[RMDB]
RNA sequence: GGGAACGACUCGAGUAGAGUCGAAAAGAUAUGGAUACAGGCGAGGAUCGUCUGUGUCGGAAACGACAUGACGGGAGCCUUGAUCCUAAGUCAAACGUAUUCUCACGGUUCGCCGUGAGAAUACGAACUUCUACGAGGGGUUCGCCCCUCGUAGAAGAAAAGAAACAACAACAACAAC
Reactivity to 2A3 in 0.01 (KOAc 150mM, MgCl2 10mM, bicine 150mM(pH8.5), 24C), signal-to-noise 1, nucleotides 027 to 126: g000a010u050a020u240g010g000a010u210a190c030a010g000g010c010g130a300g000g090a080u070c010g000u000c070u110g070u000g000u000c030g000g000a040a050a010c020g010a010c010a010u020g000a010c000g040g000g030a030g030c000c070u000u140g000a010u060c000c000u020a200a030g080u030c080a160a000a040c010g010u020a010u000u040c020u030c000a000c020g000g190u130u130c300g060c140c010g000u000g010a010g000a000a000u000a000c000g000a010a010
Reactivity to DMS in 0.01 (KOAc 150mM, MgCl2 10mM, bicine 150mM(pH8.5), 24C), signal-to-noise 1, nucleotides 027 to 126: g000a070u000a290u010g010g010a000u010a040c070a030g000g030c000g000a080g020g020a010u020c010g010u010c000u020g090u000g000u000c010g000g010a080a050a240c020g050a010c000a010u000g000a010c040g060g000g000a060g010c010c000u000u010g010a040u000c010c000u010a040a170g000u020c010a040a120a170c030g030u000a000u000u000c000u000c000a030c010g000g000u000u010c240g000c000c000g010u000g000a000g010a020a000u010a010c010g010a020a110

Structure probing data (2A3 and DMS) for a 177-nucleotide construct.
The reactions ran in a buffer of 150 mM KOAc, 10 mM MgCl2 and 150 mM bicine (pH 8.5), at 24 C.
The 2A3 profile rests on 1,544 reads.
It was measured as part of the RMDB library TTRDEL.